[RMDB]
Structure probing data (DMS and 2A3) for a 177-nucleotide construct.
Source: RMDB library RFM100, as collected in RNAgym.
Conditions: 150 mM KOAc, 10 mM MgCl2 and 150 mM bicine (pH 8.5), 24 C.
For DMS the reverse transcriptase was MarathonRT.
The 2A3 profile rests on 2,586 reads.
RNA sequence: GGGAACGACUCGAGUAGAGUCGAAAAGAAAGAAUCGCCGCCCAACCCGUGGAGUCGCGUCCGGCACGGGCGCCUCAUCCACCCCGUGUCGAACCGACCCGCCCGGCUGUCCCCCCGGGCGGGUUAACAUACCCAAGCUUUUCGAAGCUUGGGUAUGAAAAGAAACAACAACAACAAC
Reactivity to DMS in 0.01 (KOAc 150mM, MgCl2 10mM, bicine 150mM(pH8.5), 24C), signal-to-noise 2, nucleotides 027 to 126: g000a030a060a100g000a190a100u020c020g020c000c010g020c030c010c030a100a100c030c010c000g020u020g010g000a040g040u000c070g000c150g000u010c050c020g030g000c080a030c000g000g000g020c210g000c030c020u000c160a160u040c050c170a130c050c010c000c050g000u000g000u000c040g000a070a090c070c040g010a030c020c020c000g110c000c020c000g020g020c030u000g000u000c000c010c000c300c000c000g000g000g250c000g000g050g040u000u000a080a050
Reactivity to 2A3 in 0.01 (KOAc 150mM, MgCl2 10mM, bicine 150mM(pH8.5), 24C), signal-to-noise 2, nucleotides 027 to 126: g080a020a120a010g050a050a070u040c020g000c010c000g010c000c010c000a040a060c020c020c040g060u080g030g010a050g020u050c010g010c050g070u030c030c010g010g030c050a020c050g010g020g040c070g050c010c020u050c010a060u040c010c010a020c010c000c000c000g000u020g010u020c010g010a040a030c020c010g020a000c000c010c000g000c000c000c000g040g030c040u070g060u040c010c000c000c000c010c000g010g010g010c000g000g000g000u000u010a010a000